Source: RMDB library M2PK50, as collected in RNAgym. An RNA of 177 nucleotides, treated with DMS and 2A3 and read out base by base. The RNA was probed in 150 mM KOAc, 10 mM MgCl2 and 150 mM bicine (pH 8.5) at 24 C. 2A3 is a SHAPE reagent: it acylates the 2'-hydroxyl of flexible nucleotides of all four kinds.
RNA sequence: GGGAACGACUCGAGUAGAGUCGAAAACAAUGGAGGUUCGCCUCCAUUGAAAGCGCAACCCAUCUCAACUUCAAGCGCAGGGAAAAGAGAAAGAAGGGAUAUAAAGCUACCCGUUCGCGGGUAGCAAGAUAACGUUCUUCUUCGGAAGAACGUUAUCAAAAGAAACAACAACAACAAC
Reactivity to DMS in 0.01 (KOAc 150mM, MgCl2 10mM, bicine 150mM(pH8.5), 24C), signal-to-noise 2, nucleotides 027 to 126: c030a010a010u000g000g010a020g000g030u000u010c200g050c010c000u000c000c000a010u000u000g010a040a060a140g010c030g020c060a090a150c010c010c020a070u020c070u000c090a060a160c150u020u000c140a090a120g010c060g010c030a080g020g000g020a050a040a120a060g000a080g000a040a080a070g000a070a040g010g000g000a110u000a060u010a060a110a100g000c000u000a000c000c010c000g010u000u000c150g020c000g010g010g010u000a000g000c000a010a020
Reactivity to 2A3 in 0.01 (KOAc 150mM, MgCl2 10mM, bicine 150mM(pH8.5), 24C), signal-to-noise 2, nucleotides 027 to 126: c010a010a010u010g010g010a030g020g030u120u060c190g120c050c000u000c010c000a000u010u000g000a020a010a000g020c060g030c010a030a120c000c030c020a020u020c060u020c030a050a220c050u150u080c080a150a080g030c000g000c080a040g070g070g030a060a110a090a040g050a020g010a020a100a020g060a030a030g030g010g040a010u070a000u040a190a110a000g020c000u010a000c000c040c020g010u030u010c230g020c000g040g000g000u000a000g010c000a000a000